[RMDB]
RNA sequence: GGGAACGACUCGAGUAGAGUCGAAAAGCGGUGCUCGCGGCGAGCUUGUCGUCGAGAUCGCGCUGCACGGCGAGCUUGGCGUCGAGGUCGGACUGCGCGGUGAGCGAGGCCUGGUUGAGGGCCUCGAACCGGUGCUAGGAUUCGUCCUAGCACCGGUAAAAGAAACAACAACAACAAC
Reactivity to DMS in 0.01 (KOAc 150mM, MgCl2 10mM, bicine 150mM(pH8.5), 24C), signal-to-noise 1, nucleotides 027 to 126: g000c070g000g010u010g010c000u000c000g030c010g010g000c010g030a040g010c050u000u010g000u010c000g020u000c040g000a040g010a080u000c090g020c090g010c060u000g000c160a030c080g010g000c010g000a020g020c000u010u000g010g010c000g010u000c040g010a040g000g010u000c050g000g000a100c030u000g000c030g010c090g010g000u000g020a100g020c010g000a010g000g010c000c010u000g020g010u000u000g020a250g000g000g010c000c020u000c000g000a090
Reactivity to 2A3 in 0.01 (KOAc 150mM, MgCl2 10mM, bicine 150mM(pH8.5), 24C), signal-to-noise 2, nucleotides 027 to 126: g020c020g060g000u110g070c020u050c040g030c030g000g060c020g020a030g050c030u040u030g030u030c030g010u020c040g030a040g000a090u160c040g000c020g010c060u110g070c040a030c000g020g020c000g010a000g010c000u050u020g100g040c020g030u110c040g020a030g000g060u070c040g060g060a080c030u090g000c010g020c000g070g050u130g060a060g060c000g020a000g010g000c040c050u130g110g110u090u130g120a090g000g000g000c000c000u000c000g010a000